[RMDB]
RNA sequence: GGGAACGACUCGAGUAGAGUCGAAAACGAAGUAGAUAAUCAAAUUAAAAAUCACCGUCUACGCUUAAAAGUAAACACAGGUGUGAAAACAGACUACAACAUCGCCUCGCUUCCAUUCGGAUAUAUACAGUGGUACUCGCUUCGGCGAGUAUCACUGAAAAGAAACAACAACAACAAC
Reactivity to 2A3 in 0.01 (KOAc 150mM, MgCl2 10mM, bicine 150mM(pH8.5), 24C), signal-to-noise 2, nucleotides 027 to 126: c030g050a080a030g030u070a040g040a130u080a170a050u140c060a030a090a160u170u150a120a120a090a020a060u090c010a000c040c000g030u000c010u030a020c020g000c000u030u020a010a190a010a040g030u040a050a240a000c040a020c040a110g080g000u050g010u020g090a000a040a070a000c020a010g110a050c010u050a040c020a070a020c000a070u070c020g000c010c010u020c030g020c060u100u000c020c030a060u090u070c050g100g040a010u080a000u030a020u050a160
Reactivity to DMS in 0.01 (KOAc 150mM, MgCl2 10mM, bicine 150mM(pH8.5), 24C), signal-to-noise 2, nucleotides 027 to 126: c040g000a090a100g000u000a020g010a080u010a050a090u030c070a070a070a110u010u000a030a130a020a090a160u000c050a030c060c040g020u000c020u000a070c040g010c070u020u010a030a080a060a140g010u000a020a080a030c100a050c100a110g010g010u000g000u000g020a090a030a050a090c090a060g000a140c010u000a040c080a030a080c080a120u000c090g030c020c030u000c030g000c030u000u000c020c050a070u000u020c100g030g010a100u010a030u000a100u020a120